RNA sequence: GGGAACGACUCGAGUAGAGUCGAAAAGGAUUCUUCGGAAUCCGCCGACGCGUACUACUGCUCUUUUGACGUCUCCGUAAGGGAGUCCCAAAUAGGACGAGGAUCUUACGAAGAGACGAUAAGAGCAGUAUCGCUAAGUCUUACUUUCGAGUAAGAAUCAAUAAUGGGAUUUCGAUCCCAUUAUUGAAAAAGAAACAACAACAACAAC
Reactivity to 2A3 in 0.01 (KOAc 150mM, MgCl2 10mM, bicine 150mM(pH8.5), 24C), signal-to-noise 4, nucleotides 027 to 156: g000g000a010u010u060c060u090u140c300g100g000a000a000u010c000c000g000c010c000g070a090c090g010c000g040u120a090c070u000a000c010u000g010c000u010c010u010u110u090u140g220a110c030g000u020c010u000c000c010g000u000a000a000g000g000g000a020g000u010c000c000c000a300a300a150u300a110g010g000a010c010g030a170g030g000a000u020c000u010u000a010c020g040a220a160g000a010g000a000c010g000a010u020a010a000g000a000g000c000a000g000u000a000u000c000g000c000u020a110a000g020u010c010u010u010a010c010u010u120u180c240g020a010g030u020a010a010g010a040a080
Reactivity to DMS in 0.01 (KOAc 150mM, MgCl2 10mM, bicine 150mM(pH8.5), 24C), signal-to-noise 3, nucleotides 027 to 156: g010g010a010u000u000c000u000u020c260g050g000a020a010u000c010c000g010c050c030g010a090c090g050c030g020u000a100c140u000a030c000u000g010c000u010c000u010u010u010u000g030a220c050g000u000c000u000c000c010g020u000a020a010g000g020g000a100g010u020c000c000c020a060a160a250u010a080g010g000a020c010g010a140g050g010a090u000c000u000u000a020c020g010a100a100g000a120g000a060c000g020a080u000a010a020g010a020g010c010a010g000u000a000u000c020g000c020u000a100a110g030u000c000u000u000a000c000u000u000u010c190g020a070g010u000a010a020g010a060a300